[RMDB]
RNA sequence: GGGAACGACUCGAGUAGAGUCGAAAAAUUCAAUAUGUCAUUGUGUUAGUCUGUUCUUGCAUUGCUCUAAAGAGAUACCUGAGGUUGGGCAAUCUAUAAAGAAAAGAGUUUUAAUUGGCUCAUGGUUCCACAGACUGUAUAGGAAGCAUGAUGCUGGAACUCACACUUAGUUCGCUAAGUGUGAGUUAAAAGAAACAACAACAACAAC
Reactivity to 2A3 in 0.01 (KOAc 150mM, MgCl2 10mM, bicine 150mM(pH8.5), 24C), signal-to-noise 2, nucleotides 027 to 156: a000u190u090c070a100a060u140a140u170g080u060c050a060u130u050g020u020g040u160u110a040g030u000c050u070g070u080u000c040u020u000g010c040a060u000u170g020c010u000c010u070a060a110a000g080a020g040a040u060a160c030c000u050g040a060g040g120u080u040g070g000g000c010a010a000u010c020u090a170u100a210a120a100g060a050a080a030a040g050a000g000u000u040u060u210a110a120u180u120g010g000c000u000c000a010u000g160g130u000u020c000c000a020c040a060g140a140c090u050g070u140a090u110a120g000g010a000a000g040c000a000u010g000a010u210g000c000u000g010g000
Reactivity to DMS in 0.01 (KOAc 150mM, MgCl2 10mM, bicine 150mM(pH8.5), 24C), signal-to-noise 1, nucleotides 027 to 156: a120u000u000c040a130a110u030a120u040g000u000c030a110u000u000g010u000g030u000u000a070g010u000c060u000g000u000u000c030u000u000g050c090a100u010u000g010c020u010c050u000a060a060a100g010a120g000a150u000a030c020c050u000g030a100g060g020u010u000g010g020g060c020a020a060u000c040u010a140u000a100a040a080g000a060a020a090a100g010a100g000u000u010u000u000a030a200u000u000g000g000c020u000c020a000u000g000g010u000u000c030c000a140c170a170g000a160c070u020g060u000a220u000a200g000g010a050a060g020c000a030u000g010a030u020g060c010u000g010g020

The data come from the RNA Mapping Database (RMDB), library OK3TST.
This 207-nucleotide RNA was probed chemically with 2A3 and DMS.
Reactivities are given for positions 27 through 156.
Conditions: 150 mM KOAc, 10 mM MgCl2 and 150 mM bicine (pH 8.5), 24 C.
2A3 adducts were read by reverse transcription with SuperScript II with manganese.